Structure probing data (DMS and 2A3) for a 207-nucleotide construct. Values are in units of 0.01, from 0 to 300, in steps of 10. 2A3 adducts were read by reverse transcription with SuperScript II with manganese. It was measured as part of the RMDB library OK3TST. For 2A3, 1,624 sequencing reads were counted. The DMS profile rests on 2,054 reads. Values cover nucleotides 27 to 156.
[RMDB]
RNA sequence: GGGAACGACUCGAGUAGAGUCGAAAACGCAGGCCGAGUUCAUCGAGCAGGCCACCGGGCAGCCGUCGGCCGCCGCCGCCAAGGCCCGCAAGCACGAGGCCGACCACCAGAACAAGAGGUGACAGUGGGAACGCGCGAGGACAUCACACGGGCCGUGCCUGUAAAAGAACUUCGGUUCUUUUACAGGAAAAGAAACAACAACAACAAC
Reactivity to DMS in 0.01 (KOAc 150mM, MgCl2 10mM, bicine 150mM(pH8.5), 24C), signal-to-noise 1, nucleotides 027 to 156: c060g000c080a070g000g030c040c000g000a080g020u010u010c050a120u000c130g000a130g060c010a150g030g000c040c030a060c070c020g000g000g000c000a060g010c020c040g040u000c060g030g020c000c010g010c040c020g010c050c020g000c030c020a110a210g010g020c030c020c010g000c020a050a090g030c000a100c040g000a170g000g000c000c000g030a110c040c000a080c030c030a150g030a120a090c040a110a140g010a230g010g010u020g000a100c040a140g030u010g000g040g000a080a090c020g000c070g000c020g010a150g060g000a060c010a140u000c080a100c050a070c000g000g010g070c010c010g010u000g000
Reactivity to 2A3 in 0.01 (KOAc 150mM, MgCl2 10mM, bicine 150mM(pH8.5), 24C), signal-to-noise 2, nucleotides 027 to 156: c060g000c070a090g020g020c020c000g000a010g060u110u110c040a160u120c200g030a060g020c040a050g050g060c000c000a020c010c000g020g030g000c010a020g050c020c010g090u050c050g020g010c010c030g030c000c030g030c020c010g010c030c030a040a080g020g000c000c000c010g030c070a080a050g020c010a030c090g060a040g040g020c000c000g000a010c010c000a010c000c010a030g070a160a120c090a200a030g080a120g130g020u030g030a030c010a060g030u030g020g030g030a010a150c030g000c010g000c000g040a030g000g060a040c020a110u140c010a020c020a040c080g030g000g000c020c000g000u010g000